This 207-nucleotide RNA was probed chemically with 2A3. 2A3 adducts were read by reverse transcription with SuperScript II with manganese. The reactions ran in a buffer of 150 mM KOAc, 10 mM MgCl2 and 150 mM bicine (pH 8.5), at 24 C.
RNA sequence: GGGAACGACUCGAGUAGAGUCGAAAAGUUCAUCCCCUGAUCAAGGAUGCCCGAAACGGUGAGGCGGAAAGCAAAUUAAAUAACUUCAACCCAUCGGGACGGUUGGCCAGUUAAGAAGUGAGGAUUCAAAAGAUCGAACCGUUCGCGGUUCGAUCAAGGAUCUCAUCAAGUUCGCUUGAUGAGAUCCAAAAGAAACAACAACAACAAC
Reactivity to 2A3 in 0.01 (KOAc 150mM, MgCl2 10mM, bicine 150mM(pH8.5), 24C), signal-to-noise 1, nucleotides 027 to 156: g060u040u060c010a030u010c020c000c000c020u000g030a100u100c030a030a030g020g020a050u030g040c030c000c020g060a040a020a030c130g010g010u040g030a150g010g050c040g050g000a100a040a000g010c160a040a050a090u190u130a070a210a010u180a040a060c000u040u050c020a040a150c000c050c030a040u020c000g000g000g020a000c040g000g050u090u010g060g000c060c030a060g010u020u060a030a050g040a030a050g040u070g040a070g020g020a060u040u070c050a190a040a010a000g010a010u050c040g000a000a000c000c000g000u060u050c150g030c030g120g000u030u000c000g000a000u000c000a000a000